Overview:
This 207-nucleotide RNA was probed chemically with DMS and 2A3. For DMS the reverse transcriptase was MarathonRT.
RNA sequence: GGGAACGACUCGAGUAGAGUCGAAAAGGCGUAGCCGACAACAUGCCCAGGUAGCCCAGACCUUCAAGGCUACGGUGCGUUGCGACGCACGGUCUGAUUCUUCACAACGACGUUCACAGCGUCUUCUACAACCGGCAAAGAUUCGUCUUUGCCGGAACAAUAUUGACUGCUUCGGCAGUCAAUAUUGAAAAGAAACAACAACAACAAC
Reactivity to DMS in 0.01 (KOAc 150mM, MgCl2 10mM, bicine 150mM(pH8.5), 24C), signal-to-noise 2, nucleotides 027 to 156: g020g020c020g030u010a080g040c000c010g010a200c040a060a080c020a060u010g030c010c000c040a140g040g010u010a070g010c010c010c130a090g010a130c020c020u000u000c100a050a280g010g010c010u000a010c000g030g010u000g010c040g000u000u000g020c170g030a150c030g060c030a050c040g020g000u010c000u000g000a260u000u000c080u000u000c070a120c050a050a100c030g030a010c010g010u000u000c170a090c100a200g000c000g020u000c030u000u000c040u000a080c100a120a140c010c010g010g000c000a010a010a020g020a040u010u000c270g000u000c010u000u000u000g000c010c000g000g000a000a010
Reactivity to 2A3 in 0.01 (KOAc 150mM, MgCl2 10mM, bicine 150mM(pH8.5), 24C), signal-to-noise 5, nucleotides 027 to 156: g050g000c130g120u140a050g030c040c020g070a060c050a110a050c020a080u180g030c000c000c020a020g000g040u020a010g010c020c040c090a030g000a030c000c000u030u010c020a020a010g000g000c000u000a000c000g010g000u000g000c010g000u030u080g030c160g120a000c000g000c000a000c020g010g010u000c000u000g020a060u150u090c090u210u190c110a090c050a270a100c100g020a000c010g090u170u110c100a060c020a100g010c010g000u010c010u040u020c010u070a090c020a090a070c010c000g000g000c000a000a000a000g000a020u060u130c190g030u000c150u020u000u000g000c000c000g000g000a000a000

Reactivities are rounded to 0.1 and cut off at 0 and 3. The DMS profile rests on 4,707 reads. The reactions ran in a buffer of 150 mM KOAc, 10 mM MgCl2 and 150 mM bicine (pH 8.5), at 24 C. For 2A3, 4,274 sequencing reads were counted. Source: RMDB library M2RFPK, as collected in RNAgym.